[RMDB]
RNA sequence: GGGAACGACUCGAGUAGAGUCGAAAACAUAAGCAAGCACCGAGCCAUCAAGGCAUUCAAACAUCGGGUCUCCGUGAUUCAGAGCCUCGUAGUCGCGAUCCUGUAACGAGUGGUGGAUGGUACCAACGCUAAAACAAAUAUUCGUAUUUGUUUUAGCAAAAGAAACAACAACAACAAC
Reactivity to DMS in 0.01 (KOAc 150mM, MgCl2 10mM, bicine 150mM(pH8.5), 24C), signal-to-noise 9, nucleotides 027 to 126: c060a080u010a110a110g020c110a080a080g010c040a070c030c030g010a170g020c030c030a050u000c100a090a090g000g010c050a040u000u000c080a090a090a080c100a090u010c040g000g010g010u000c030u000c030c040g020u000g010a100u000u000c070a080g010a080g000c080c020u000c020g020u000a070g020u000c050g010c070g000a090u000c020c020u010g010u010a060a080c130g000a080g020u000g000g020u000g000g010a080u000g010g010u000a090c050c070a080a100c210
Reactivity to 2A3 in 0.01 (KOAc 150mM, MgCl2 10mM, bicine 150mM(pH8.5), 24C), signal-to-noise 8, nucleotides 027 to 126: c010a040u160a090a050g070c050a040a020g020c020a030c050c030g040a030g010c010c010a070u080c060a060a060g060g000c020a010u080u080c040a020a090a080c030a060u080c040g020g010g060u020c030u000c040c020g040u070g050a080u130u100c050a030g010a030g100c020c000u030c030g060u080a040g040u030c010g000c020g050a030u030c000c010u050g020u060a070a040c070g030a070g050u050g020g050u030g040g030a070u070g010g010u030a030c020c030a060a030c090